[RMDB]
RNA sequence: GGGAACGACUCGAGUAGAGUCGAAAAUAGUGCUUAGCAUGUCAAUCGUAGUGGGCAUAGCUUACUAUGUGGUUAAAAAGAGGAAAGCCAAAGCAUCCAAUGGAUAUCCUAAAACAACAGGGCAAAGCUGUCAUUACUCAUUCGUGAGUAAUGACAGAAAAGAAACAACAACAACAAC
Reactivity to DMS in 0.01 (KOAc 150mM, MgCl2 10mM, bicine 150mM(pH8.5), 24C), signal-to-noise 5, nucleotides 027 to 126: u010a070g010u000g000c040u000u010a090g020c030a050u000g000u000c060a090a090u000c060g020u000a040g010u000g010g010g020c010a140u000a140g040c040u000u010a020c010u000a020u010g010u000g020g010u000u010a060a060a080a080a070g010a140g010g000a060a070a120g010c040c050a020a070a070g010c060a050u000c060c070a050a120u010g010g010a120u000a070u000c040c010u000a060a060a080a050c110a030a060c070a050g000g010g010c090a050a090a150g010
Reactivity to 2A3 in 0.01 (KOAc 150mM, MgCl2 10mM, bicine 150mM(pH8.5), 24C), signal-to-noise 4, nucleotides 027 to 126: u070a000g050u030g010c030u060u080a020g010c010a030u050g030u100c030a040a130u070c080g070u050a040g080u080g040g000g000c060a160u120a110g000c010u020u000a010c000u000a010u040g060u060g020g090u100u100a130a100a010a000a020g120a060g070g070a090a050a010g000c010c000a040a060a010g020c000a020u060c030c020a060a040u100g030g020a030u040a050u130c010c020u040a090a040a020a030c050a020a010c020a030g000g000g050c030a060a040a040g050

Record summary: Chemical mapping of a 177-nucleotide RNA with DMS and 2A3. The reactions ran in a buffer of 150 mM KOAc, 10 mM MgCl2 and 150 mM bicine (pH 8.5), at 24 C. The 2A3 profile rests on 5,678 reads.